[RMDB]
RNA sequence: GGGAACGACUCGAGUAGAGUCGAAAAAUUUUAGUACUUGAAGAAUAUGAGUUGGCAAAAGCACGCGGUGCUAAGAUUUACUGUGAGCUGGCCGGUUUUGGCAUGAGCGAUGACGCCCAUCACAUCACCUACUUACAUGAUUCGUCAUGUAAGUAGGAAAAGAAACAACAACAACAAC
Reactivity to 2A3 in 0.01 (KOAc 150mM, MgCl2 10mM, bicine 150mM(pH8.5), 24C), signal-to-noise 5, nucleotides 027 to 126: a000u040u030u010u020a020g000u010a010c010u040u130g060a140a060g060a200a100u180a100u300g120a110g110u150u090g080g000c060a090a140a120a130g050c020a040c050g050c070g040g000u010g000c010u020a010a000g000a010u010u020u060a080c050u070g050u040g080a040g010c020u040g040g000c050c000g110g030u100u150u170u230g050g000c030a040u120g080a020g030c020g010a050u060g020a020c010g020c010c010c000a030u070c030a010c010a050u110c020a020
Reactivity to DMS in 0.01 (KOAc 150mM, MgCl2 10mM, bicine 150mM(pH8.5), 24C), signal-to-noise 7, nucleotides 027 to 126: a030u010u000u010u000a020g010u010a020c020u000u010g010a100a110g000a130a090u000a080u010g010a140g020u000u010g010g020c050a080a080a090a100g010c050a050c080g010c080g010g010u000g000c020u000a020a030g010a040u000u000u000a070c120u000g010u000g010a100g010c040u000g000g010c020c020g010g000u000u000u010u010g010g020c030a050u000g000a040g010c040g000a080u010g010a080c140g010c020c010c020a110u010c090a060c140a070u020c180a150
Chemical mapping of a 177-nucleotide RNA with 2A3 and DMS. DMS adducts were read by reverse transcription with MarathonRT. For 2A3 the reverse transcriptase was SuperScript II with manganese. In probing experiments dimethyl sulfate is read out at A N1 and C N3, which are open when not base-paired. Values cover nucleotides 27 to 126. The reactions ran in a buffer of 150 mM KOAc, 10 mM MgCl2 and 150 mM bicine (pH 8.5), at 24 C.